RNA sequence: GGGAACGACUCGAGUAGAGUCGAAAAGAUAUGGACCAAGAACUACCUUUGAAAUCAGCCGUUGAAAGCCGUUCUUCGGAAACGAAGAACGGCUGGAGGCUGAUCGUACGAGGCUUGGUCCUAAGUCGUUAUUAAAGAUGUUCGCAUCUUUAAUAACAAAAGAAACAACAACAACAAC
Reactivity to 2A3 in 0.01 (KOAc 150mM, MgCl2 10mM, bicine 150mM(pH8.5), 24C), signal-to-noise 1, nucleotides 027 to 126: g020a020u040a030u120g020g000a010c010c000a010a010g020a080a080c180u240a090c240c030u070u030u140g080a040a050a000u020c010a000g000c000c000g260u290u100g030a070a010a000g010c000c000g000u010u000c000u000u000c010g050g050a070a000a020c000g030a000a000g000a000a000c000g020g000c000u010g000g000a000g000g040c010u000g000a010u010c010g060u100a030c040g000a000g040g000c000u000u010g000g010u030c000c000u000a000a000g000u000c030
Reactivity to DMS in 0.01 (KOAc 150mM, MgCl2 10mM, bicine 150mM(pH8.5), 24C), signal-to-noise 4, nucleotides 027 to 126: g010a030u000a120u010g000g000a010c010c000a000a010g010a090a060c080u010a300c010c000u000u000u010g020a140a110a010u000c010a000g010c000c000g020u020u010g000a220a190a080g010c000c000g020u000u000c000u000u010c000g010g000a020a030a070c000g010a020a000g000a020a000c000g000g010c000u000g010g010a030g020g010c000u000g010a000u000c040g010u000a230c300g000a000g000g000c010u000u000g010g000u000c000c000u000a010a080g000u000c050
Chemical mapping of a 177-nucleotide RNA with 2A3 and DMS. The reactions ran in a buffer of 150 mM KOAc, 10 mM MgCl2 and 150 mM bicine (pH 8.5), at 24 C. For 2A3, 4,337 sequencing reads were counted. For DMS the reverse transcriptase was MarathonRT. It was measured as part of the RMDB library TTRINS. 2A3 adducts were read by reverse transcription with SuperScript II with manganese.